Chemical mapping of a 177-nucleotide RNA with DMS and 2A3.
The RNA was probed in 150 mM KOAc, 10 mM MgCl2 and 150 mM bicine (pH 8.5) at 24 C.
For DMS, 1,501 sequencing reads were counted.
It was measured as part of the RMDB library TTRDEL.
For DMS the reverse transcriptase was MarathonRT.
RNA sequence: GGGAACGACUCGAGUAGAGUCGAAAAGAUAUGGAUUGUCCCAUCAUCGAAGAACUCGGAAACGAGGGAGAUGGUUGGGAGCAAUCCUAAGUCAAAACACUCAAUGAUGUUCGCAUCAUUGAGUGAACUCAACCUUACUCUUCGGAGUAAGGUUGAGAAAAGAAACAACAACAACAAC
Reactivity to DMS in 0.01 (KOAc 150mM, MgCl2 10mM, bicine 150mM(pH8.5), 24C), signal-to-noise 2, nucleotides 027 to 126: g000a040u000a300u000g000g000a010u000u000g020u010c000c010c000a050u000c010a020u000c000g040a070a120g020a150a160c000u000c000g000g000a110a170a240c000g000a010g000g010g020a050g000a040u010g000g010u000u000g010g030g000a010g000c010a000a000u000c000c000u000a000a130g000u000c050a140a080a090a230c010a010c000u000c000a000a010u010g010a020u000g010u010u020c240g010c000a000u010c000a000u010u000g000a000g020u000g010a000a080
Reactivity to 2A3 in 0.01 (KOAc 150mM, MgCl2 10mM, bicine 150mM(pH8.5), 24C), signal-to-noise 2, nucleotides 027 to 126: g020a030u110a050u150g040g000a020u010u010g020u040c000c010c000a000u010c010a000u000c020g300a300a120g020a030a020c000u020c010g010g000a080a070a050c020g020a030g000g010g030a050g000a000u000g040g210u110u250g000g000g000a100g110c000a010a000u000c000c010u000a160a020g000u000c030a010a010a040a120c000a000c000u000c000a000a010u000g000a000u000g080u080u130c300g010c180a030u000c000a000u000u010g000a000g000u020g000a000a000